[RMDB]
Chemical mapping of a 177-nucleotide RNA with 2A3. The RNA was probed in 150 mM KOAc, 10 mM MgCl2 and 150 mM bicine (pH 8.5) at 24 C.
RNA sequence: GGGAACGACUCGAGUAGAGUCGAAAAUGGCACCUUGCACUCUACGCCUUUCCUUUCAAUGGGCUGGUAUGAUUUAUGAAGGAUGCGAGAGCGAAACUGGGAAGUUCGAAGACUCGUGAAUGGCUUUGAAACGGAGUGAUUUCGAUCACUCCGUUUCAAAAGAAACAACAACAACAAC
Reactivity to 2A3 in 0.01 (KOAc 150mM, MgCl2 10mM, bicine 150mM(pH8.5), 24C), signal-to-noise 1, nucleotides 027 to 126: u060g000g000c000a010c000c040u030u070g000c040a010c000u100c030u110a020c070g000c000c000u010u070u030c060c000u060u170u180c000a000a160u120g000g000g030c030u000g010g010u200a110u160g010a030u060u170u100a130u100g030a000a050g080g020a000u040g030c000g010a000g000a000g000c010g020a140a000a000c070u070g000g040g120a120a000g010u010u010c000g000a000a120g100a030c000u000c010g010u000g080a070a070u150g030g000c110u000u000u000